[RMDB]
RNA sequence: GGGAACGACUCGAGUAGAGUCGAAAAACAUCCAGAGAUGGGUGCCCCCUUGUGGUCGGUGUACAGGUGGUGCAUGGCUGUCGUCAGCUCGUGUCGUGAGAUGUUGGGUUAAGUCCCGCAACGAGCGGGGGACGGAUAAAUUCGUUUAUCCGUCCCCAAAAGAAACAACAACAACAAC
Reactivity to 2A3 in 0.01 (KOAc 150mM, MgCl2 10mM, bicine 150mM(pH8.5), 24C), signal-to-noise 2, nucleotides 027 to 126: a000c000a000u000c000c000a010g020a000g000a080u040g010g060g000u060g030c010c010c000c010c000u030u140g040u080g050g010u040c050g000g000u080g040u070a090c060a100g080g120u110g050g010u030g010c020a030u070g080g000c020u040g050u080c060g040u040c020a020g010c000u000c020g030u030g040u040c020g030u040g070a060g020a070u090g030u180u200g060g000g000u060u050a080a060g230u090c010c010c010g000c010a000a010c000g020a000g000c130g000
Reactivity to DMS in 0.01 (KOAc 150mM, MgCl2 10mM, bicine 150mM(pH8.5), 24C), signal-to-noise 4, nucleotides 027 to 126: a210c030a010u000c000c010a010g000a230g000a180u000g000g000g010u000g020c040c020c000c040c070u000u000g020u000g010g010u000c040g020g010u000g010u010a060c110a080g000g010u000g020g020u010g030c050a080u000g000g000c040u010g000u010c070g010u010c060a110g000c030u010c020g030u010g000u000c050g010u000g000a140g010a070u000g020u000u000g010g000g030u000u010a070a120g000u000c020c000c010g000c090a080a040c060g000a080g020c110g030
The record gives the reactivity of an RNA of 177 nucleotides to 2A3 and DMS. For DMS the reverse transcriptase was MarathonRT. The RNA was probed in 150 mM KOAc, 10 mM MgCl2 and 150 mM bicine (pH 8.5) at 24 C. The data come from the RNA Mapping Database (RMDB), library OK2TRN. For DMS, 4,637 sequencing reads were counted.